[RMDB]
RNA sequence: GGGAACGACUCGAGUAGAGUCGAAAAUGCAGGCUGAGAACGAGCGACUAAACGGUUUGGAGGAUAACUGAUUUAGGGACUUUCUUUAUACCUCUAUAAAAUCGAAGUAAGGCGAUUGAGGGCGAAUGAAUAAUGAACUGUUCGCAGUUCAUUAUUCAAAAGAAACAACAACAACAAC
Reactivity to 2A3 in 0.01 (KOAc 150mM, MgCl2 10mM, bicine 150mM(pH8.5), 24C), signal-to-noise 5, nucleotides 027 to 126: u100g000c020a010g050g000c020u040g020a010g040a120a060c080g020a030g050c030g020a020c010u060a050a040a030c030g030g050u040u050u080g080g030a070g020g010a040u040a120a030c030u020g070a160u050u020u110a040g010g020g030a030c020u070u110u010c000u000u120u030a100u070a090c010c000u020c000u020a050u130a170a130a010a020u030c010g010a050a000g070u100a030a030g160g000c010g020a020u030u060g020a040g020g030g000c010g030a030a040u080
Reactivity to DMS in 0.01 (KOAc 150mM, MgCl2 10mM, bicine 150mM(pH8.5), 24C), signal-to-noise 4, nucleotides 027 to 126: u010g020c070a060g010g030c060u010g010a110g030a070a060c170g000a080g010c030g010a220c050u010a040a060a090c040g000g010u000u000u000g020g020a080g000g000a090u000a020a050c070u000g000a100u010u000u000a080g000g010g010a140c110u010u000u000c040u010u020u010a150u010a130c020c010u000c020u000a120u020a060a050a070a050u010c030g010a050a060g000u010a090a140g020g010c030g010a050u000u000g010a040g000g000g000c090g010a070a070u000
Background
An RNA of 177 nucleotides, treated with 2A3 and DMS and read out base by base. Reactivities are given for positions 27 through 126. Conditions: 150 mM KOAc, 10 mM MgCl2 and 150 mM bicine (pH 8.5), 24 C. For 2A3, 5,192 sequencing reads were counted. Source: RMDB library RFMREP, as collected in RNAgym.